[RMDB]
RNA sequence: GGGAACGACUCGAGUAGAGUCGAAAAUAAAUUCUUUGAAAGAAGUUUCAUGACCAUGAAAAGUGAAAAGAGAAAUGGUAACUUAUCAGGAAGAAAGGAAGCAGAUGGAAUUGAGGCCAAAGAUCUAUUCCAAGUACUACUUCGGUAGUACUUGGAAAAAAGAAACAACAACAACAAC
Reactivity to 2A3 in 0.01 (KOAc 150mM, MgCl2 10mM, bicine 150mM(pH8.5), 24C), signal-to-noise 2, nucleotides 027 to 126: u180a000a010a000u040u000c020u080u030u050g040a040a090a040g070a000a040g000u020u020u020c070a000u090g060a040c000c000a000u020g150a010a010a010a000g190u300g070a040a050a000a000g200a020g040a130a060a000u110g000g020u000a170a000c000u020u060a090u050c010a070g140g010a120a120g010a150a060a000g030g110a080a010g010c070a000g040a050u020g000g000a100a030u060u030g000a020g070g000c020c010a030a030a030g000a050u000c000u000a080
Reactivity to DMS in 0.01 (KOAc 150mM, MgCl2 10mM, bicine 150mM(pH8.5), 24C), signal-to-noise 3, nucleotides 027 to 126: u070a030a060a150u020u010c010u000u000u000g030a120a060a080g030a140a120g000u030u000u010c030a060u010g000a110c050c030a020u000g000a010a070a050a080g010u020g000a050a050a070a090g000a050g020a060a120a030u020g000g010u010a020a140c100u000u010a080u010c050a020g000g050a060a020g000a020a070a030g000g000a040a050g000c050a030g000a040u020g000g000a030a050u000u020g000a070g000g010c100c020a040a100a060g000a040u020c040u000a110
Conditions: 150 mM KOAc, 10 mM MgCl2 and 150 mM bicine (pH 8.5), 24 C. Chemical mapping of a 177-nucleotide RNA with 2A3 and DMS. The 2A3 profile rests on 750 reads. High 2A3 reactivity points to a flexible backbone, as in loops and unpaired stretches. For DMS the reverse transcriptase was MarathonRT. It was measured as part of the RMDB libraries RFM100 and RFMREP.